[RMDB]
RNA sequence: GGGAACGACUCGAGUAGAGUCGAAAACAGUGUAAUCGUUGCCGGAAGGAACGUUGUGAGGGCAGGAUACUUGGGCAUGGCAUUGUCUGUGUCGAUCUGGCUGUCCUUGUGGAAGCGGCUGUGGCUAAGGGCCAUUCGACGGAGGUCGGGUAGUCCUACCUACACUUAAGUUCGCUUAAGUGUAGGUAAAAGAAACAACAACAACAAC
Reactivity to 2A3 in 0.01 (KOAc 150mM, MgCl2 10mM, bicine 150mM(pH8.5), 24C), signal-to-noise 4, nucleotides 027 to 156: c030a020g040u040g030u150a090a100u080c060g050u050u110g130c030c020g050g050a050a050g020g040a050a040c040g020u080u100g070u060g060a030g010g010g000c020a000g030g050a060u080a160c050u090u100g050g020g000c010a010u010g020g000c060a170u040u300g040u120c020u020g010u010g010u000c020g030a070u040c020u070g070g000c010u010g020u020c000c000u000u050g070u060g020g050a070a010g010c010g040g000c040u050g020u040g070g000c040u060a060a120g030g010g000c010c010a010u030u010c010g010a010c000g070g090a100g040g160u010c000g000g000g000u000a010g000u000c000c000u010
Reactivity to DMS in 0.01 (KOAc 150mM, MgCl2 10mM, bicine 150mM(pH8.5), 24C), signal-to-noise 2, nucleotides 027 to 156: c010a110g020u000g000u010a090a100u000c070g040u010u000g000c010c020g040g010a160a140g000g030a050a090c050g010u020u010g000u000g010a050g030g000g030c000a050g010g010a120u000a010c040u000u000g000g020g000c020a040u000g030g000c030a270u000u000g010u010c030u010g010u030g050u000c010g000a030u000c010u000g000g020c020u000g000u000c020c010u020u000g040u010g030g010a100a140g050c030g020g050c020u000g030u000g000g020c020u010a070a060g010g040g000c000c000a100u000u010c000g010a020c030g040g010a250g010g010u000c010g020g010g000u000a030g010u000c030c000u000
This 207-nucleotide RNA was probed chemically with 2A3 and DMS. Values cover nucleotides 27 to 156. It was measured as part of the RMDB library ARCHII.